[RMDB]
The record gives the reactivity of an RNA of 177 nucleotides to 2A3 and DMS. Source: RMDB library M2PK90, as collected in RNAgym. For 2A3, 1,616 sequencing reads were counted. The reactions ran in a buffer of 150 mM KOAc, 10 mM MgCl2 and 150 mM bicine (pH 8.5), at 24 C.
RNA sequence: GGGAACGACUCGAGUAGAGUCGAAAAGAAAAUGGUACGAACGGUUCCAAAGGAGCCGAAGUUCAAAGCUAAGGCAUCGAUCUAAAAUCGUAUCAAAUAGGUAACGAGCUUGGCAAUGAACAAAAAACAACUCUUUUCGAUUCGUCGAAAAGAGUUGAAAAGAAACAACAACAACAAC
Reactivity to 2A3 in 0.01 (KOAc 150mM, MgCl2 10mM, bicine 150mM(pH8.5), 24C), signal-to-noise 2, nucleotides 027 to 126: g080a020a180a000a050u130g000g020u050a010c040g020a300a020c010g000g000u020u000c000c000a210a070a260g010g010a000g020c000c060g050a040a020g000u010u000c000a010a020a010g000c010u040a060a000g140g000c010a190u010c010g030a010u020c020u100a050a050a020a140u190c120g060u090a030u120c070a050a070a050u080a020g000g010u030a110a040c030g010a000g020c010u020u040g020g000c000a010a080u020g000a000a000c000a000a060a000a030a000a000
Reactivity to DMS in 0.01 (KOAc 150mM, MgCl2 10mM, bicine 150mM(pH8.5), 24C), signal-to-noise 2, nucleotides 027 to 126: g000a080a050a030a140u000g010g020u000a030c070g000a170a300c040g000g010u010u000c010c020a090a170a170g040g000a030g000c000c000g010a040a050g020u000u000c000a000a030a300g000c000u010a020a050g010g010c050a050u010c040g030a040u010c060u010a040a060a140a090u020c090g000u010a050u000c100a000a070a150u000a040g030g000u000a090a100c000g020a080g000c000u010u010g040g000c020a010a250u010g000a010a020c020a010a000a040a010a060a060